[RMDB]
RNA sequence: GGGAACGACUCGAGUAGAGUCGAAAAGACCGUUAGUUCGCUAACGGUCAAAUAAAAUCAGCGGUAACGAGGCGUAAAAUAUUACGGCUGAACGCCUCGUUAAAAACAGGAGCUUCGGCUCCUGUAAGCGAAGUACUAAGUUCGCUUAGUACUUCGCAAAAGAAACAACAACAACAAC
Reactivity to 2A3 in 0.01 (KOAc 150mM, MgCl2 10mM, bicine 150mM(pH8.5), 24C), signal-to-noise 2, nucleotides 027 to 126: g020a000c000c000g000u000u010a020g010u010u060c200g000c110u010a010a010c010g000g000u000c000a000a000a000u010a000a000a000a070u070c030a010g080c050g200g030u020a010a000c000g000a000g000g000c020g010u040a030a070a110a030u290a120u190u210a060c070g070g000c060u050g020a060a020c000g000c000c030u000c000g000u000u000a000a000a000a000a000c000a000g000g010a010g010c000u060u100c190g130g000c000u000c020c010u010g000u000a000a010
Reactivity to DMS in 0.01 (KOAc 150mM, MgCl2 10mM, bicine 150mM(pH8.5), 24C), signal-to-noise 1, nucleotides 027 to 126: g000a000c000c000g000u000u000a000g010u000u000c300g010c000u000a000a010c000g020g020u000c010a010a060a030u000a030a070a070a080u000c100a100g010c100g010g000u000a050a020c010g010a020g000g040c010g010u010a040a110a050a150u010a120u000u000a090c130g010g000c130u010g000a100a010c020g010c010c000u010c010g020u000u000a000a060a020a100a010c010a000g010g000a020g000c010u000u000c200g030g000c000u000c000c000u010g000u010a000a090
Notes
An RNA of 177 nucleotides, treated with 2A3 and DMS and read out base by base. Conditions: 150 mM KOAc, 10 mM MgCl2 and 150 mM bicine (pH 8.5), 24 C. For 2A3, 2,137 sequencing reads were counted. Source: RMDB library M2PK50, as collected in RNAgym. In probing experiments dimethyl sulfate is read out at A N1 and C N3, which are open when not base-paired.